[RMDB]
Structure probing data (2A3 and DMS) for a 207-nucleotide construct. The RNA was probed in 150 mM KOAc, 10 mM MgCl2 and 150 mM bicine (pH 8.5) at 24 C. For DMS the reverse transcriptase was MarathonRT. Source: RMDB library OK3TST, as collected in RNAgym. For 2A3 the reverse transcriptase was SuperScript II with manganese. Reactivities are given for positions 27 through 156.
RNA sequence: GGGAACGACUCGAGUAGAGUCGAAAAAAUUAGGUGCCCCGACGUAUAAUUUCGGCGAUGCCGUUCACACAUUCGAUGAGUCGCUAUACGUUGAAGCACCCGCCAAACACACCAUGCAAAACGUUUACCAGACUCAGCAAGCAACGAACGAUUAUUGUACUUAGGACUCAUUCGUGAGUCCUAAGUAAAAAGAAACAACAACAACAAC
Reactivity to 2A3 in 0.01 (KOAc 150mM, MgCl2 10mM, bicine 150mM(pH8.5), 24C), signal-to-noise 2, nucleotides 027 to 156: a010a000u250u150a070g050g010u040g020c040c000c020c040g010a010c000g000u000a050u090a160a240u120u180u200c030g020g010c010g010a020u100g080c070c020g090u160u150c100a040c000a000c010a150u180u130c090g210a220u050g040a030g020u010c000g000c010u000a010u000a010c010g000u000u010g000a070a000g020c000a020c020c000c000g070c080c010a120a130a020c070a000c000a060c050c030a060u110g010c030a000a000a060a060c090g010u040u090u120a090c020c010a030g020a010c050u060c050a000g030c060a080a020g040c030a030a030c000g120a020a010c020g090a040u080u060a070u130u270g030
Reactivity to DMS in 0.01 (KOAc 150mM, MgCl2 10mM, bicine 150mM(pH8.5), 24C), signal-to-noise 1, nucleotides 027 to 156: a060a020u000u000a060g000g030u000g080c000c000c000c000g060a010c030g000u000a050u000a140a240u000u000u010c050g040g000c030g040a070u000g030c000c000g000u000u000c160a230c100a130c030a160u000u000c020g010a140u000g010a190g050u000c000g030c100u000a020u000a030c020g000u000u000g050a070a130g000c000a040c030c040c040g050c120c010a090a070a100c070a100c040a080c050c010a090u010g000c020a100a060a070a100c070g000u000u000u000a090c030c030a160g000a030c000u000c040a070g010c020a080a080g040c060a040a080c000g030a050a120c050g000a140u000u000a040u000u000g040